[RMDB]
This 177-nucleotide RNA was probed chemically with DMS and 2A3. Values are in units of 0.01, from 0 to 300, in steps of 10. For 2A3, 2,506 sequencing reads were counted.
RNA sequence: GGGAACGACUCGAGUAGAGUCGAAAACCCAUACUAUGGGAACUGCUGGGUUCCUCGGAUGUCGAUCCCCUCUCCCGUUCGGGAAAAGGGGGACUCCGGAACUCCCUGCAGGCUGGGGACGAAGCCCGAUACUUUAUUCCUUCGGGAAUAAAGUAUCAAAAGAAACAACAACAACAAC
Reactivity to DMS in 0.01 (KOAc 150mM, MgCl2 10mM, bicine 150mM(pH8.5), 24C), signal-to-noise 3, nucleotides 027 to 126: c000c000c000a110u030a100c200u010a110u010g010g010g000a090a080c050u010g000c010u000g000g010g030u000u000c040c030u000c020g020g010a020u020g030u000c010g020a140u020c010c000c000c000u000c230u000c000c010c000g040u000u010c250g010g010g000a000a030a080a040g000g010g000g010g000a010c000u010c000c010g000g010a050a060c120u020c020c040c020u000g010c000a030g010g020c080u010g020g000g000g000a100c080g000a150a120g000c020c040c070
Reactivity to 2A3 in 0.01 (KOAc 150mM, MgCl2 10mM, bicine 150mM(pH8.5), 24C), signal-to-noise 2, nucleotides 027 to 126: c000c000c000a010u140a030c090u120a090u190g050g020g050a110a040c010u010g000c000u010g060g000g000u030u020c000c010u000c000g010g020a070u190g010u030c030g070a240u140c000c000c000c000u000c000u020c000c010c000g120u270u230c110g030g000g000a010a070a040a000g020g010g000g000g000a000c000u000c000c000g010g000a020a010c030u040c010c000c010u010g000c000a010g020g030c020u050g000g020g020g030a030c050g070a070a010g030c000c000c000